The data come from the RNA Mapping Database (RMDB), library RNAMAK. An RNA of 207 nucleotides, treated with DMS and 2A3 and read out base by base. 2A3 adducts were read by reverse transcription with SuperScript II with manganese. For DMS the reverse transcriptase was MarathonRT. For DMS, 4,056 sequencing reads were counted. For 2A3, 6,857 sequencing reads were counted.

RNA sequence: GGGAACGACUCGAGUAGAGUCGAAAACGAAUGUUCGCAUUCGCUUUAGGGGUCGAUAGAGAGAGGUAAGAGAGGCUGAAGCCUCCACGGCUACCCACCUCUUACUCCCCACCUCUCAAAAUCGACGGAGGCACCCGGCCUGCUGCUUCGGCAGCAAGGCCUUAUGAUUCUUCGGAAUCAUAAGGCCAAAAGAAACAACAACAACAAC
Reactivity to DMS in 0.01 (KOAc 150mM, MgCl2 10mM, bicine 150mM(pH8.5), 24C), signal-to-noise 3, nucleotides 027 to 156: c000g000a040a010u000g000u000u000c290g000c020a010u000u010c010g030c000u010u010u010a080g010g020g040g020u000c030g020a100u010a040g010a300g010a070g000a050g030g020u010a150a160g000a120g000a040g010g000c030u010g030a300a100g030c000c020u000c140c130a070c240g040g020c010u000a080c100c050c110a040c010c020u000c000u000u020a110c120u010c030c010c010c050a080c000c010u010c000u010c020a030a180a270a040u000c020g010a050c020g000g030a120g020g020c070a140c020c010c030g010g010c050c030u010g020c000u020g020c010u000u000c300g030g000c060a060g010c020a040a050
Reactivity to 2A3 in 0.01 (KOAc 150mM, MgCl2 10mM, bicine 150mM(pH8.5), 24C), signal-to-noise 6, nucleotides 027 to 156: c010g010a010a000u050g020u120u140c260g000c120a000u010u010c010g030c060u150u120u210a130g000g000g020g010u000c010g000a000u020a010g050a000g000a000g000a000g010g030u060a250a060g050a000g010a010g090g000c120u060g070a110a000g000c010c010u100c200c200a100c110g000g000c000u040a110c010c030c040a020c010c010u010c010u020u050a140c120u200c030c010c010c000a010c000c000u000c000u000c000a050a040a010a020u000c000g010a010c020g010g030a010g000g010c020a010c030c010c000g020g010c010c010u010g000c000u000g000c000u040u050c210g110g000c000a000g000c000a000a010